[RMDB]
RNA sequence: GGGAACGACUCGAGUAGAGUCGAAAAUAGCAGGACAUAGCCGUUAUGCGCGAAGCGGUGUAGCGUCACUUUGAUGGCGCUACUAUGAAUUGAUGCAAGGUGUGGAGCGACCUUAAACAGUUCUGGUUUGACGGCUUUCAGUUCGCUGAAAGCCGAACCUGCGAGAUGGAUUCGUCCAUCUCGCAGGAAAAGAAACAACAACAACAAC
Reactivity to 2A3 in 0.01 (KOAc 150mM, MgCl2 10mM, bicine 150mM(pH8.5), 24C), signal-to-noise 1, nucleotides 027 to 156: u150a000g010c020a020g010g000a020c030a060u130a000g010c020c020g080u110u070a110u290g050c090g030c040g060a040a000g010c030g020g010u010g020u010a000g010c010g020u000c000a050c110u300u150u300g090a250u040g040g010c000g000c000u010a000c000u100a010u000g040a020a070u000u080g120a020u040g050c020a020a020g030g000u020g050u070g070g000a020g000c000g000a010c000c040u170u160a170a040a000c050a000g000u040u040c040u030g090g080u000u050u150g050a040c000g000g000c000u000u060u000c000a050g000u010u070c240g020c060u000g030a020a000a000g000c000c000g000a000a010

About this RNA: This 207-nucleotide RNA was probed chemically with 2A3. Source: RMDB library M2RFPK, as collected in RNAgym. The RNA was probed in 150 mM KOAc, 10 mM MgCl2 and 150 mM bicine (pH 8.5) at 24 C. For 2A3 the reverse transcriptase was SuperScript II with manganese.